[RMDB]
Structure probing data (2A3 and DMS) for a 177-nucleotide construct. The reactions ran in a buffer of 150 mM KOAc, 10 mM MgCl2 and 150 mM bicine (pH 8.5), at 24 C. Values are in units of 0.01, from 0 to 300, in steps of 10. 2A3 adducts were read by reverse transcription with SuperScript II with manganese. Values cover nucleotides 27 to 126. It was measured as part of the RMDB library OK2TST. The 2A3 profile rests on 1,881 reads.
RNA sequence: GGGAACGACUCGAGUAGAGUCGAAAAUGAUCGCUCUCGGCUGCAGCAACUUCUUUGGCUCCUUCUUUAAAAUUCAUGUCAUUUGCUGUGCGCUUUCUGUCACUCUGGCUGUGGAUGGAGCUGGAGGUCCGUCUAGUGAUUUCGAUCACUAGACGGAAAAAGAAACAACAACAACAAC
Reactivity to 2A3 in 0.01 (KOAc 150mM, MgCl2 10mM, bicine 150mM(pH8.5), 24C), signal-to-noise 2, nucleotides 027 to 126: u100g010a050u030c030g000c060u000c000u020c070g070g000c020u020g000c010a020g000c000a020a040c010u080u080c020u110u080u060g040g010c010u030c030c010u070u020c060u050u210u140a160a190a120a140u160u120c060a040u150g080u030c010a080u040u060u150g050c070u020g030u020g000c030g000c020u020u100u080c040u080g120u070c020a020c040u030c000u020g020g040c000u020g030u080g120g090a090u070g000g000a020g000c010u000g000g010a020g030g010
Reactivity to DMS in 0.01 (KOAc 150mM, MgCl2 10mM, bicine 150mM(pH8.5), 24C), signal-to-noise 2, nucleotides 027 to 126: u000g000a070u010c060g020c010u000c010u010c050g020g020c030u000g030c020a040g020c030a060a080c190u000u000c070u010u000u000g010g020c020u000c040c010u000u000c030u010u000u000a050a060a080a140u010u000c070a040u000g010u010c030a080u000u000u000g050c080u000g020u000g030c080g000c100u010u000u000c060u000g020u020c110a110c000u000c050u000g020g020c020u010g010u010g000g010a040u010g000g000a050g000c020u000g000g020a070g010g010